[RMDB]
RNA sequence: GGGAACGACUCGAGUAGAGUCGAAAACACUUACCGUACAUCGAGCAAGGGAUGAUGCUCGCUGAGCAGUUCAAGCAGAAGGCCCUCGGCCUCCUGCAGACCGCGUCCCGCCAAGCAGAGGUUAUCACGUGUGAGACAUGUUCGCAUGUCUCACACGAAAAGAAACAACAACAACAAC
Reactivity to 2A3 in 0.01 (KOAc 150mM, MgCl2 10mM, bicine 150mM(pH8.5), 24C), signal-to-noise 3, nucleotides 027 to 126: c050a000c030u200u160a120c030c050g060u090a020c020a120u070c060g070a030g120c000a040a140g060g000g050a080u170g070a130u050g050c000u040c100g210c130u150g000a020g050c050a000g000u120u060c090a120a030g000c010a000g000a020a030g020g000c020c020c110u100c090g000g000c000c000u010c000c000u010g000c010a010g000a000c020c040g010c030g040u050c000c000c000g000c010c030a060a010g000c050a000g060a030g080g000u030u050a100u100c030a010
Reactivity to DMS in 0.01 (KOAc 150mM, MgCl2 10mM, bicine 150mM(pH8.5), 24C), signal-to-noise 1, nucleotides 027 to 126: c060a110c120u000u060a140c030c090g000u020a130c050a010u000c000g020a100g080c000a120a300g000g040g030a000u010g010a110u000g010c000u000c000g000c100u010g000a020g010c000a100g050u000u060c070a090a120g000c020a030g000a000a000g000g040c000c020c190u010c270g000g000c000c000u030c030c000u000g000c030a050g000a010c070c210g000c050g000u000c050c000c000g170c120c030a100a080g000c010a050g000a050g000g000u000u000a010u000c100a150
This 177-nucleotide RNA was probed chemically with 2A3 and DMS. Reactivities are given for positions 27 through 126. 2A3 adducts were read by reverse transcription with SuperScript II with manganese.